[RMDB]
RNA sequence: GGGAACGACUCGAGUAGAGUCGAAAAUGUAAAACUCAAGCAGAAAUAAAUGUUGGCAUCAUUGGAGAUAAGGUGGCUAGAAUGUUUCCCCCUUGUCUCUUACCUCUCGUUACAUUGUACAAAAGGACUUGAGCAACCCAUUGACCAACAGCAGUUAGAGUCAUGGUAGGUUCGCCUACCAUGACUCAAAAGAAACAACAACAACAAC
Reactivity to 2A3 in 0.01 (KOAc 150mM, MgCl2 10mM, bicine 150mM(pH8.5), 24C), signal-to-noise 1, nucleotides 027 to 156: u040g000u060a040a000a220a140c040u040c020a040a130g030c040a110g160a190a210a030u120a140a190a080u070g040u040u010g000g040c020a000u060c040a040u210u200g090g000a000g000a000u000a010a000g000g020u020g070g000c000u080a070g250a300a100u120g030u000u060u050c000c000c000c000c000u000u000g000u000c000u000c000u000u010a030c000c010u000c000u040c100g070u050u000a190c140a170u240u070g150u160a060c000a050a110a010a040g120g000a100c000u010u000g000a000g000c000a000a270c030c030c030a050u060u070g040a060c070c000a000a000c030a050g180c000a010g000u050u300a000
Structure probing data (2A3) for a 207-nucleotide construct. For 2A3, 286 sequencing reads were counted. It was measured as part of the RMDB library OK3TST. Values cover nucleotides 27 to 156. 2A3 adducts were read by reverse transcription with SuperScript II with manganese. 2A3 is a SHAPE reagent: it acylates the 2'-hydroxyl of flexible nucleotides of all four kinds. The RNA was probed in 150 mM KOAc, 10 mM MgCl2 and 150 mM bicine (pH 8.5) at 24 C.